[RMDB]
Overview:
Conditions: 150 mM KOAc, 10 mM MgCl2 and 150 mM bicine (pH 8.5), 24 C. The record gives the reactivity of an RNA of 177 nucleotides to 2A3 and DMS. The 2A3 profile rests on 4,745 reads. It was measured as part of the RMDB library OK2TST. For DMS the reverse transcriptase was MarathonRT. Values are in units of 0.01, from 0 to 300, in steps of 10. 2A3 adducts were read by reverse transcription with SuperScript II with manganese.
RNA sequence: GGGAACGACUCGAGUAGAGUCGAAAAAAUAGAGCAUUUUCAGCGGGGGGAGAUCGAAAUGGAAGUGGAGAUUCAAUCAUUACUGGCUGGCAAGGUUGCUCCCCUUGCCCCCCGCAAUGUGCCAAGAGUGAUAAAUGAGUUUCGACUCAUUUAUCACAAAAGAAACAACAACAACAAC
Reactivity to 2A3 in 0.01 (KOAc 150mM, MgCl2 10mM, bicine 150mM(pH8.5), 24C), signal-to-noise 4, nucleotides 027 to 126: a000a010u200a020g050a060g000c020a030u060u060u120u250c100a030g030c010g010g000g000g010g040g010a050g020a090u110c040g050a060a060a070u160g090g030a050a000g020u030g040g000a030g010a030u100u090c020a010a020u020c010a050u010u110a050c030u030g130g080c030u040g040g020c010a010a030g010g010u000u020g010c000u020c000c000c000c000u010u020g010c010c000c000c000c000c020g000c000a000a000u020g010u010g000c000c000a040a010g090a020
Reactivity to DMS in 0.01 (KOAc 150mM, MgCl2 10mM, bicine 150mM(pH8.5), 24C), signal-to-noise 5, nucleotides 027 to 126: a080a070u000a110g010a180g030c000a020u000u000u010u000c180a150g020c020g010g000g010g000g010g000a120g000a090u010c120g000a090a070a060u010g020g010a070a040g020u010g010g010a110g000a170u000u010c070a040a040u000c040a080u000u010a070c090u000g020g020c120u000g000g000c060a050a040g010g000u000u000g010c130u000c020c070c030c030u000u000g010c000c020c030c010c000c000g020c020a020a010u000g020u000g000c050c040a100a110g010a210